Structure probing data (DMS) for a 177-nucleotide construct. The RNA was probed in 150 mM KOAc, 10 mM MgCl2 and 150 mM bicine (pH 8.5) at 24 C.
[RMDB]
RNA sequence: GGGAACGACUCGAGUAGAGUCGAAAAGAUUUUGGAGGAGGUACCUUUGAUGUGUCGCUCAUAGGUAAAUAUAAGUCUUAUGUCACUGUUAUAGAUACCGAAGGAGACUCGUUCUUAGGCGGUAGAGCCUAACGGGGCAUUUCGAUGCCCCGUUAGGAAAAGAAACAACAACAACAAC
Reactivity to DMS in 0.01 (KOAc 150mM, MgCl2 10mM, bicine 150mM(pH8.5), 24C), signal-to-noise 2, nucleotides 027 to 126: g020a130u000u000u010u000g030g020a130g000g010a060g040g000u010a030c050c010u000u010u010g000a060u010g020u010g000u010c080g010c070u000c010a050u000a150g010g010u000a020a100a200u000a080u000a080a040g000u000c050u000u010a100u020g000u000c080a060c050u010g010u010u010a070u000a030g000a240u000a030c080c040g000a210a170g010g000a030g000a020c020u010c100g020u000u020c030u000u000a080g000g040c070g010g020u000a040g000a080g030